[RMDB]
RNA sequence: GGGAACGACUCGAGUAGAGUCGAAAAUUGGGGAGUACACUCGAGGAGUGGAAGGCGGGGAGACGGGGAUCCCGGGCUUACCCACGGGAACUGCUGGGUUCCCCUGAUGUCCAGUCCCUCCCCGUUCAACGGUGUUCGUUCGCGAACACCAAAAGAAACAACAACAACAAC
Reactivity to 2A3 in 0.01 (KOAc 150mM, MgCl2 10mM, bicine 150mM(pH8.5), 24C), signal-to-noise 3, nucleotides 027 to 129: u080u050g010g000g000g000a020g030u090a050c010a010c010u020c030g190a160g090g070a020g010u020g010g070a130a070g050g010c050g000g000g000g000a020g010a010c020g000g000g000g000a010u010c020c000c000g000g010g010c020u090u210a140c000c000c020a050c120g000g000g020a040a030c060u110g020c000u010g030g040g000u040u020c000c000c000c000u000g050a020u020g130u000c000c010a010g030u060c010c000c010u010c010c010c000c000g000u090u080c010a040a010c040
Reactivity to DMS in 0.01 (KOAc 150mM, MgCl2 10mM, bicine 150mM(pH8.5), 24C), signal-to-noise 6, nucleotides 027 to 129: u000u000g040g000g030g050a010g020u050a110c040a020c040u030c000g000a130g040g010a070g080u000g030g040a070a060g070g040c160g070g020g140g030a030g040a190c260g070g000g000g020a030u000c020c020c040g010g020g010c130u020u030a110c000c040c050a110c160g030g000g000a000a100c130u050g000c050u020g000g000g000u000u020c040c010c020c030u000g010a080u040g040u070c000c020a070g030u040c010c130c000u000c060c000c010c060g090u030u020c050a090a150c060
Source: RMDB library 15KLIB, as collected in RNAgym. The record gives the reactivity of an RNA of 170 nucleotides to 2A3 and DMS. The RNA was probed in 150 mM KOAc, 10 mM MgCl2 and 150 mM bicine (pH 8.5) at 24 C. DMS adducts were read by reverse transcription with MarathonRT. For 2A3 the reverse transcriptase was SuperScript II with manganese.